[RMDB]
RNA sequence: GGGAACGACUCGAGUAGAGUCGAAAACCUUCCUCAACGAGGUGAGGGAGUGCGCGCAUCUGCGCCGGGCAGAGCGGUUCCGUAGAGGCCAGGUCUCGCACCGCGGCGCGCAGCUACGGGCCGAGGGGACCCUACGUUAUUUCGAUAACGUAGGGUCAAAAGAAACAACAACAACAAC
Reactivity to 2A3 in 0.01 (KOAc 150mM, MgCl2 10mM, bicine 150mM(pH8.5), 24C), signal-to-noise 4, nucleotides 027 to 126: c010c000u020u060c000c010u030c020a090a100c080g170a090g020g150u160g040a090g030g020g000a100g020u120g000c050g000c000g000c050a170u040c120u220g010c010g000c030c030g030g030g030c080a060g020a060g110c010g000g000u280u260c010c000g000u000a010g010a050g080g000c010c000a020g070g000u020c050u060c180g020c070a010c020c020g050c090g060g000c090g010c030g020c050a000g020c010u020a010c000g000g000g010c010c000g010a040g000g030g030
Reactivity to DMS in 0.01 (KOAc 150mM, MgCl2 10mM, bicine 150mM(pH8.5), 24C), signal-to-noise 5, nucleotides 027 to 126: c090c010u000u010c000c000u010c040a080a170c160g010a120g010g030u000g000a050g000g000g010a040g010u000g010c050g010c020g010c150a250u010c100u010g030c040g020c040c050g000g010g020c130a100g000a100g010c020g010g000u000u000c010c010g010u020a010g000a120g000g000c020c030a250g010g000u000c030u020c160g000c140a040c030c020g000c130g010g000c040g010c130g010c110a070g000c020u000a030c020g000g000g000c010c000g000a110g000g010g000